The data come from the RNA Mapping Database (RMDB), library OK1LIB. An RNA of 177 nucleotides, treated with 2A3 and read out base by base. The reactions ran in a buffer of 150 mM KOAc, 10 mM MgCl2 and 150 mM bicine (pH 8.5), at 24 C.
[RMDB]
RNA sequence: GGGAACGACUCGAGUAGAGUCGAAAAGAGCUUCUCUGGGAGGUCGAGUGGGAAUCUGCCGGGUCCUACUCGAUGCCGCAAGACGGCUCGUUAGCGACGCCUUCUGGAACAGAUGACUCUGGUGCAGGGUCCCACCCCUAUUCGUAGGGGUGGGACCAAAAGAAACAACAACAACAAC
Reactivity to 2A3 in 0.01 (KOAc 150mM, MgCl2 10mM, bicine 150mM(pH8.5), 24C), signal-to-noise 1, nucleotides 027 to 126: g040a000g000c000u000u060c030u000c010u010g000g040g000a060g060g030u010c000g010a000g000u000g000g020g040a030a150u080c040u040g160c100c040g010g000g000u000c020c000u020a000c000u040c000g010a000u010g030c000c000g000c040a020a020g170a210c030g000g000c050u060c020g000u000u000a070g050c160g150a000c010g050c000c010u000u000c020u030g010g050a080a100c050a120g090a170u030g100a130c000u050c040u000g010g080u100g050c030a080g020